[RMDB]
Conditions: 150 mM KOAc, 10 mM MgCl2 and 150 mM bicine (pH 8.5), 24 C.
An RNA of 177 nucleotides, treated with DMS and read out base by base.

RNA sequence: GGGAACGACUCGAGUAGAGUCGAAAAGAUAUGGAUGGUGAUAAGUGGCUCCUUAUCAGCAACAGCUGGAUGUCGGAAACGACAUACCAGACAUGCUGUGGGAGCCACUUAUCACCAUCCUAAGUCACAUACUAAUCGACUUCGGUCGAUUAGUAUGAAAAGAAACAACAACAACAAC
Reactivity to DMS in 0.01 (KOAc 150mM, MgCl2 10mM, bicine 150mM(pH8.5), 24C), signal-to-noise 3, nucleotides 027 to 126: g030a050u020a300u000g000g010a020u000g000g010u010g010a030u000a010a010g020u000g000g010c000u020c000c000u000u010a160u010c010a010g020c000a050a080c300a250g000c010u010g020g000a040u000g020u000c000g010g000a100a110a240c000g000a010c000a020u000a090c000c000a000g000a030c140a180u010g000c000u000g020u000g000g010g010a010g000c000c010a000c000u000u000a010u020c000a000c030c000a000u000c000c010u000a000a070g010u000c030a280